[RMDB]
RNA sequence: GGGAACGACUCGAGUAGAGUCGAAAAGGCGCUAUGCGAGUACUACACGUGAAAAUGUGUAGUAGAAAUACUACUUUUUUUGUAGUUCAGAAGUGCGCCAAUCUUCGUGAUGAAUUUGCAUAGCGAAGGGUUAAGAUAUGUUCGCAUAUCUUAACCCAAAAGAAACAACAACAACAAC
Reactivity to 2A3 in 0.01 (KOAc 150mM, MgCl2 10mM, bicine 150mM(pH8.5), 24C), signal-to-noise 9, nucleotides 027 to 126: g120g010c010g000c010u010a000u020g020c010g030a020g050u000a000c000u010a000c000a000c000g110u110g130a080a050a050a060u130g010u010g000u010a000g000u000a000g020a010a100a030u120a000c000u000a000c000u080u140u090u070u060u180u260g000u010a010g000u030u020c030a020g000a060a020g040u060g100c100g100c060c010a010a040u030c000u010u010c030g120u070g050a120u070g050a070a210u060u050u080g010c020a010u000a000g000c010g030a090a100
Reactivity to DMS in 0.01 (KOAc 150mM, MgCl2 10mM, bicine 150mM(pH8.5), 24C), signal-to-noise 7, nucleotides 027 to 126: g030g010c010g000c000u000a000u000g010c020g020a030g020u010a050c010u000a010c010a010c040g030u000g000a150a050a090a030u010g010u000g010u000a000g000u000a020g010a100a110a100u030a110c000u010a010c000u000u000u020u020u040u030u000g010u000a010g000u000u010c070a090g000a020a020g000u020g000c240g000c280c270a060a060u010c000u000u000c000g010u020g010a120u030g020a110a100u020u010u000g010c000a000u000a000g000c010g010a090a110